[RMDB]
RNA sequence: GGGAACGACUCGAGUAGAGUCGAAAAGGAGCGCCUCGUGCUGGGCGGGCCUAAAACUACAUUUCCCAAGGAUCACAGCAGGCACUAACCGGAAGGGGCGGCCUCAAAUCCAUUGCGCACGCGCACCCUUAGUGGUCCAAUUCGUUGGACCACUAAGAAAAGAAACAACAACAACAAC
Reactivity to DMS in 0.01 (KOAc 150mM, MgCl2 10mM, bicine 150mM(pH8.5), 24C), signal-to-noise 4, nucleotides 027 to 126: g010g010a050g010c000g000c000c010u020c070g020u010g000c020u000g000g000g010c000g010g000g020c000c010u000a060a040a110a070c220u050a090c220a130u030u010u010c000c000c000a150a170g000g010a070u010c140a090c160a160g000c140a010g030g000c030a080c030u020a270a190c030c000g060g100a140a100g010g000g000g000c100g000g000c000c000u000c050a050a130a080u010c020c010a110u030u060g000c030g000c000a050c070g020c110g010c050a050c100c070
Reactivity to 2A3 in 0.01 (KOAc 150mM, MgCl2 10mM, bicine 150mM(pH8.5), 24C), signal-to-noise 8, nucleotides 027 to 126: g020g020a050g100c010g000c010c000u040c040g030u060g020c040u070g000g000g020c000g010g110g000c000c010u100a120a100a040a030c130u220a040c030a140u030u010u020c010c000c010a020a040g050g010a040u110c070a020c030a160g120c040a000g030g000c040a050c300u040a050a050c010c010g070g010a080a060g060g020g020g000c020g010g010c000c000u020c000a040a050a020u010c010c010a040u040u190g020c040g000c010a020c030g020c010g010c010a080c020c000
The record gives the reactivity of an RNA of 177 nucleotides to DMS and 2A3. The RNA was probed in 150 mM KOAc, 10 mM MgCl2 and 150 mM bicine (pH 8.5) at 24 C. For 2A3 the reverse transcriptase was SuperScript II with manganese. Reactivities are rounded to 0.1 and cut off at 0 and 3.